[RMDB]
RNA sequence: GGGAACGACUCGAGUAGAGUCGAAAACGGCGCAACGACACGCAGUGGCGAGCGCGAGUGUCGGGACAGCGAGCGCAGGCAUUGGGAUGGUGAGCGGAGGCGUCGGGGGCGGUGAGACAGGCGGGAGGGGUGUAGUGCUAUUCGUAGCACUACACCCAAAAGAAACAACAACAACAAC
Reactivity to DMS in 0.01 (KOAc 150mM, MgCl2 10mM, bicine 150mM(pH8.5), 24C), signal-to-noise 1, nucleotides 027 to 126: c080g000g010c000g000c030a080a160c000g000a130c020a020c040g090c160a010g030u000g000g000c140g000a080g010c010g000c120g000a210g000u000g020u060c010g000g000g060a040c060a080g020c120g000a170g000c000g050c000a250g000g000c140a030u000u000g030g030g000a090u070g000g000u000g020a160g010c080g000g000a070g000g030c000g020u000c080g030g000g000g000g040c120g000g000u000g000a110g030a030c110a010g000g000c050g000g010g000a040g100
Reactivity to 2A3 in 0.01 (KOAc 150mM, MgCl2 10mM, bicine 150mM(pH8.5), 24C), signal-to-noise 2, nucleotides 027 to 126: c020g030g000c050g000c030a080a000c080g000a010c010a020c040g050c080a050g000u020g120g000c050g070a070g110c040g020c000g020a060g030u030g030u030c000g000g010g100a050c060a020g050c020g010a020g010c050g000c050a020g070g000c010a040u000u150g020g060g090a130u100g000g020u030g010a090g010c020g000g030a040g080g000c000g000u090c060g060g000g010g000g040c030g000g020u040g000a040g000a010c030a020g040g030c000g040g000g020a010g030